[RMDB]
Conditions: 150 mM KOAc, 10 mM MgCl2 and 150 mM bicine (pH 8.5), 24 C. An RNA of 207 nucleotides, treated with 2A3 and DMS and read out base by base. DMS (dimethyl sulfate) methylates the pairing face of unpaired adenines and cytosines. For DMS, 2,180 sequencing reads were counted.
RNA sequence: GGGAACGACUCGAGUAGAGUCGAAAAGAUAGACUGGAUGAAGAAAAUAUUGUACAUAUAUACCAUGGAAUACUAUGCAGCCCUAAGAAGGAAUGAGAUCGUGUCCUUUGCAGGGACAUGGAUGAAGCUGGAAGCCAUCAUCCUCAGCAAACUAACAUGCGAGUAUAAAUUUCGAUUUAUACUCGCAAAAAGAAACAACAACAACAAC
Reactivity to 2A3 in 0.01 (KOAc 150mM, MgCl2 10mM, bicine 150mM(pH8.5), 24C), signal-to-noise 1, nucleotides 027 to 156: g040a030u040a000g020a000c000u010g000g090a110u050g020a050a110g090a030a120a160a000u270a040u190u270g060u070a050c000a010u090a020u040a000u000a110c000c090a000u030g020g030a060a000u120a100c080u110a070u200g020c020a010g000c000c000c020u010a110a070g020a090a000g040g040a000a070u120g010a060g000a120u080c090g000u020g030u150c000c000u010u000u100g050c030a020g070g000g000a020c010a010u000g000g010a000u040g020a000a000g020c020u100g000g170a020a020g000c010c010a010u020c000a040u050c000c000u010c010a030g030c030a040a060a210c020u040a040a020c010a070
Reactivity to DMS in 0.01 (KOAc 150mM, MgCl2 10mM, bicine 150mM(pH8.5), 24C), signal-to-noise 2, nucleotides 027 to 156: g000a080u000a060g010a120c040u010g010g030a120u010g030a110a110g010a150a040a070a120u000a060u010u000g010u020a080c040a060u020a090u010a070u000a050c020c060a090u010g010g030a140a050u000a100c060u000a080u000g010c060a100g000c010c000c030u000a090a160g010a090a030g010g010a110a050u000g010a080g030a090u010c050g020u000g010u010c000c010u000u000u000g000c240a190g020g010g020a030c030a050u020g020g010a060u000g010a050a090g010c000u000g030g010a070a150g060c050c030a120u000c040a120u000c010c010u000c030a080g000c060a020a140a060c050u010a050a070c100a080